Chemical mapping of a 207-nucleotide RNA with 2A3 and DMS. The DMS profile rests on 8,479 reads. 2A3 is a SHAPE reagent: it acylates the 2'-hydroxyl of flexible nucleotides of all four kinds. Conditions: 150 mM KOAc, 10 mM MgCl2 and 150 mM bicine (pH 8.5), 24 C. For DMS the reverse transcriptase was MarathonRT.

[RMDB]
RNA sequence: GGGAACGACUCGAGUAGAGUCGAAAAUAAACAGGGUAUCCGACAAGAGCCUGUUGGUGUCAUUUUCCAAGGAGGAGCAGGUGUAGGCAAAUCUAUUACAGUCAUGCAUCUUUGUAAUGCUUUAAGCGCAGCAUUGUUGUCUGAUGACGAAUAUGAAAUGUGCAAAUAUGUUCGCAUAUUUGCACAUAAAAGAAACAACAACAACAAC
Reactivity to 2A3 in 0.01 (KOAc 150mM, MgCl2 10mM, bicine 150mM(pH8.5), 24C), signal-to-noise 4, nucleotides 027 to 156: u120a030a030a010c030a020g040g000g020u110a130u080c050c040g030a020c050a070a030g020a030g090c020c020u030g020u050u040g040g000u050g000u040c090a090u040u080u090u090c050c010a030a020g020g020a010g000g010a010g010c020a010g000g060u090g040u110a000g020g000c030a020a030a020u010c030u080a070u090u140a060c060a030g020u030c010a020u060g030c030a040u020c040u000u100u050g070u130a160a040u050g010c000u070u080u140a080a030g030c070g000c020a020g000c010a030u010u020g000u010u030g000u010c100u060g050a050u050g040a040c050g060a050a050u150a090u180g050a070a120
Reactivity to DMS in 0.01 (KOAc 150mM, MgCl2 10mM, bicine 150mM(pH8.5), 24C), signal-to-noise 3, nucleotides 027 to 156: u010a070a060a080c040a060g020g020g000u000a110u000c020c040g010a240c110a110a100g010a130g040c010c050u000g010u010u000g020g000u000g010u020c040a110u000u010u000u000c020c040a080a120g000g010a080g020g000a080g030c040a060g020g020u000g030u010a010g030g010c020a070a080a110u000c050u000a080u000u000a050c040a090g010u000c020a050u000g020c040a070u010c020u010u000u000g020u000a050a060u010g010c010u000u000u000a050a100g000c070g030c040a060g000c050a080u000u010g010u000u000g010u000c040u000g010a110u000g010a120c040g010a080a070u000a130u010g010a090a100